[RMDB]
RNA sequence: GGGAACGACUCGAGUAGAGUCGAAAAGAAAGAAAGAAAGUAAUCAAAAUCCGACCCCAGCAUUAGCCAUGGGGUAGGUGUUCCUCUUGAGGAAGGUAGAGACUCCUCUUCUGCCACCUGUUGGCAACCCAUGAGAUCUUUUCGAAGAUCUCAUGGGAAAAGAAACAACAACAACAAC
Reactivity to DMS in 0.01 (KOAc 150mM, MgCl2 10mM, bicine 150mM(pH8.5), 24C), signal-to-noise 3, nucleotides 027 to 126: g000a120a080a070g010a090a100a070g000a070a030a120g000u040a120a070u020c120a060a030a040a100u010c000c000g010a040c010c000c000c000a050g020c050a210u030u070a090g020c090c110a120u020g000g000g000g040u000a000g020g000u000g010u010u000c000c020u020c150u010u010g010a050g020g000a060a010g000g030u010a100g000a110g010a110c070u000c040c020u020c020u020u010c080u000g000c000c010a060c030c090u010g010u010u000g000g000c060a110a090
Reactivity to 2A3 in 0.01 (KOAc 150mM, MgCl2 10mM, bicine 150mM(pH8.5), 24C), signal-to-noise 5, nucleotides 027 to 126: g040a020a040a010g080a030a080a010g070a050a090a010g080u240a070a120u130c080a030a040a020a050u030c010c000g010a010c010c000c000c000a000g020c030a120u180u280a040g040c070c080a100u060g000g000g000g010u000a000g000g000u010g010u020u010c010c000u020c030u070u140g030a020g020g010a100a060g030g010u110a050g030a010g040a170c030u040c030c010u030c000u050u040c050u060g000c010c000a030c020c050u090g030u200u020g040g000c030a040a050